[RMDB]
RNA sequence: GGGAACGACUCGAGUAGAGUCGAAAACGAGUAGAACAACGGCGGAUGCGGUGCGACGAGUGGCCGCUUAUCCCAUAGACUUCAACACGGCGCAAAGCAGCACCAUAACACAUCAACAACAACAGCACUGAUUUAUACUGUUCGCAGUAUAAAUCAGAAAAGAAACAACAACAACAAC
Reactivity to 2A3 in 0.01 (KOAc 150mM, MgCl2 10mM, bicine 150mM(pH8.5), 24C), signal-to-noise 7, nucleotides 027 to 126: c020g010a020g070u110a030g050a120a020c050a050a030c060g080g010c040g030g030a040u070g030c030g030g020u060g030c040g020a080c060g020a070g050u100g080g020c000c010g020c030u030u040a040u020c000c000c000a010u040a030g080a050c020u070u040c080a040a030c030a020c070g040g000c020g010c060a050a080a040g030c020a000g010c010a020c010c010a040u100a080a040c120a010c010a080u130c030a030a060c000a020a010c010a020a000c000a040g070c030a020
Reactivity to DMS in 0.01 (KOAc 150mM, MgCl2 10mM, bicine 150mM(pH8.5), 24C), signal-to-noise 7, nucleotides 027 to 126: c100g020a100g010u010a080g010a060a090c080a080a090c130g000g020c090g000g010a070u010g020c100g000g010u000g000c030g000a080c100g010a160g020u000g020g020c020c010g010c050u000u000a080u000c020c010c020a100u010a070g000a100c080u010u010c070a060a070c110a100c060g010g000c040g000c040a040a070a080g000c070a060g010c050a040c040c030a090u010a070a070c100a070c080a040u010c030a040a070c050a040a030c050a030a040c090a080g020c170a160
Structure probing data (2A3 and DMS) for a 177-nucleotide construct. Conditions: 150 mM KOAc, 10 mM MgCl2 and 150 mM bicine (pH 8.5), 24 C. The data come from the RNA Mapping Database (RMDB), library OK2TST. Reactivities are given for positions 27 through 126.